[RMDB]
RNA sequence: GGGAACGACUCGAGUAGAGUCGAAAAAAAGAAAACAACAACUUCGCAUUAGCUGCCUAAGCUAGCAAAUGCGGUUCCGCCCUCCAUCGCCCAUGUGGUAGGUGUCGGGACUCACUUUUAGUGGGCUACGCCUCUCACCCUCCGUCUGUGGGUGAAGCAAGUCCUUAGACUUCGGUCUAAGGACUUGAAAAGAAACAACAACAACAAC
Reactivity to 2A3 in 0.01 (KOAc 150mM, MgCl2 10mM, bicine 150mM(pH8.5), 24C), signal-to-noise 2, nucleotides 027 to 156: a000a000a000g180a020a070a030a010c140a030a000c030a050a120c050u070u040c020g000c000a000u010u040a030g000c020u030g020c030c110u250a110a050g030c050u070a040g040c010a020a020a020u010g010c000g010g010u000u000c000c000g020c010c010c000u010c000c000a000u000c000g010c030c000c010a000u000g000u000g000g040u100a000g000g000u000g100u190c020g000g000g000a000c030u100c060a120c090u120u160u070u170a010g000u010g000g000g000c000u020a020c040g070c000c030u070c000u000c030a010c000c000c000u020c040c030g190u050c080u100g010u090g010g000g000u000g000a010a010g010
Description:
Chemical mapping of a 207-nucleotide RNA with 2A3. The 2A3 profile rests on 1,013 reads. The data come from the RNA Mapping Database (RMDB), library RSTRND. The RNA was probed in 150 mM KOAc, 10 mM MgCl2 and 150 mM bicine (pH 8.5) at 24 C.